Structure probing data (2A3 and DMS) for a 177-nucleotide construct. Source: RMDB library OK2TST, as collected in RNAgym. For DMS the reverse transcriptase was MarathonRT. Conditions: 150 mM KOAc, 10 mM MgCl2 and 150 mM bicine (pH 8.5), 24 C. Values cover nucleotides 27 to 126. For 2A3 the reverse transcriptase was SuperScript II with manganese.
RNA sequence: GGGAACGACUCGAGUAGAGUCGAAAAAUCGAUCUUUCCAAUAUCCAGCAGGAAGACCCGUCGGGUUGGGUACAUGCAUAUCCAGAGAUAUGGUACGGAAUUAAAAUCUGGAAUACCGUGGGACCUGACGUUAAUGUAAUUUCGAUUACAUUAACGUAAAAGAAACAACAACAACAAC
Reactivity to 2A3 in 0.01 (KOAc 150mM, MgCl2 10mM, bicine 150mM(pH8.5), 24C), signal-to-noise 9, nucleotides 027 to 126: a000u100c040g030a040u020c040u050u080u020c020c000a030a020u070a060u130c040c010a020g020c020a020g100g010a070a020g070a080c020c020c010g070u070c060g040g020g020u050u060g060g010g000u030a040c020a060u110g050c020a020u050a040u110c020c020a010g030a000g000a060u040a040u190g060g050u110a060c070g040g080a030a010u140u140a100a110a030a080u000c010u030g020g040a030a040u050a060c020c030g020u040g020g040g050a050c000c010u020g050
Reactivity to DMS in 0.01 (KOAc 150mM, MgCl2 10mM, bicine 150mM(pH8.5), 24C), signal-to-noise 9, nucleotides 027 to 126: a080u010c090g010a070u000c040u000u000u000c020c020a100a130u010a090u010c050c040a110g010c090a110g000g000a070a060g010a070c040c020c050g020u000c060g010g010g010u000u000g010g010g010u000a050c070a050u010g010c110a090u000a060u000c010c030a040g010a070g000a110u010a050u010g010g010u000a090c140g010g010a090a070u010u010a060a050a110a140u000c010u000g000g000a050a080u000a060c210c020g010u000g000g000g000a060c030c030u000g010